RNA sequence: GGGAACGACUCGAGUAGAGUCGAAAAGGAGGAUGCUGCAGAACAACCAAUGGAAGUUGAGGCUUCAGGGGCUGAUCGAGCAGCUGAUGCCGGCGCAGCUGACACCCAAAAAGAGGCCGCCCAGGAAUCCACCGUAUCAUUUCGAUGAUACGGUGGAAAAAGAAACAACAACAACAAC
Reactivity to DMS in 0.01 (KOAc 150mM, MgCl2 10mM, bicine 150mM(pH8.5), 24C), signal-to-noise 1, nucleotides 027 to 126: g040g020a020g040g020a060u000g040c020u000g120c020a250g020a110a090c040a090a130c050c010a080a150u000g000g050a000a180g000u000u000g000a130g000g000c020u000u000c000a020g010g010g020g040c020u000g010a060u000c250g020a120g000c010a060g000c010u000g000a070u000g020c040c010g000g050c260g010c040a010g000c020u000g000a180c210a010c000c010c010a010a030a120a140a150g000a150g000g010c060c050g030c060c000c020a260g010g000a160a220